[RMDB]
RNA sequence: GGGAACGACUCGAGUAGAGUCGAAAAGAAAGAAAGAAGAAUCACCAGGAUGCAAGGAUCCUCAACUACGUUAUUCGGGCACCUUGAGUUGAGAGGAGCUAGUGGUGCGCCCGGCCUGGAGAUCAAAACACGACAGGCGGGUUCGCCCGCCUGUCAACCCAAGUUUUAAGUUCGCUUAAAACUUGGGAAAAGAAACAACAACAACAAC
Reactivity to 2A3 in 0.01 (KOAc 150mM, MgCl2 10mM, bicine 150mM(pH8.5), 24C), signal-to-noise 1, nucleotides 027 to 156: g070a020a130a010g070a030a100a000g080a070a030g020a050a030u020c010a020c000c000a010g000g010a030u100g010c000a040a270g000g000a010u010c000c000u000c000a010a000c010u210a090c040g110u220u080a060u090u120c010g010g020g040c010a020c010c030u100u230g030a000g000u010u010g000a000g000a000g010g000a000g000c000u010a000g020u030g000g000u000g000c030g010c040c000c000g030g000c020c020u020g030g000a050g000a030u040c020a000a090a030a000c060a010c090g020a000c000a000g010g000c010g000g000g010u030u010c050g050c020c000c000g000c000c000u000g000u000c000a000a000